[RMDB]
RNA sequence: GGGAACGACUCGAGUAGAGUCGAAAACGCGUUCCAUCCUUUCUUACCUGAUGGCCGGCAUGGUCCCAGCCUCCUCGCUGGCGCCGGCUGGGCAACAUUCCGAGGGGACCGUCCCCCUCGGUAAUGGGAUAAUUUAUCACUUCGGUGAUAAAUUAUCAAAAGAAACAACAACAACAAC
Reactivity to 2A3 in 0.01 (KOAc 150mM, MgCl2 10mM, bicine 150mM(pH8.5), 24C), signal-to-noise 2, nucleotides 027 to 126: c030g020c030g040u040u020c010c020a030u040c020c030u060u090u080c020u050u080a100c020c030u050g120a140u140g180g010c000c000g000g000c020a080u150g030g070u110c000c020c000a010g010c000c010u110c010c020u060c060g020c020u020g000g020c010g000c030c010g010g020c000u010g000g000g010c020a030a010c000a040u010u030c000c000g000a010g020g000g000g010a020c000c040g070u080c010c000c010c000c000u000c000g000g010u000a000a000u010g000g020
Reactivity to DMS in 0.01 (KOAc 150mM, MgCl2 10mM, bicine 150mM(pH8.5), 24C), signal-to-noise 4, nucleotides 027 to 126: c120g010c070g030u000u010c010c000a110u020c080c070u000u000u000c040u010u000a160c040c050u000g010a120u010g000g030c000c010g010g000c020a120u010g020g010u010c290c010c010a040g010c010c090u010c120c090u000c160g000c010u010g010g020c190g030c000c010g010g000c020u000g010g000g000c090a130a100c020a040u000u000c000c000g010a010g000g010g000g000a110c110c190g000u010c110c000c000c000c000u000c000g010g000u020a010a010u000g000g010

Structure probing data (2A3 and DMS) for a 177-nucleotide construct.
For 2A3, 3,699 sequencing reads were counted.
The reactions ran in a buffer of 150 mM KOAc, 10 mM MgCl2 and 150 mM bicine (pH 8.5), at 24 C.
The data come from the RNA Mapping Database (RMDB), library 15KREP.
DMS adducts were read by reverse transcription with MarathonRT.
For DMS, 3,848 sequencing reads were counted.
2A3 adducts were read by reverse transcription with SuperScript II with manganese.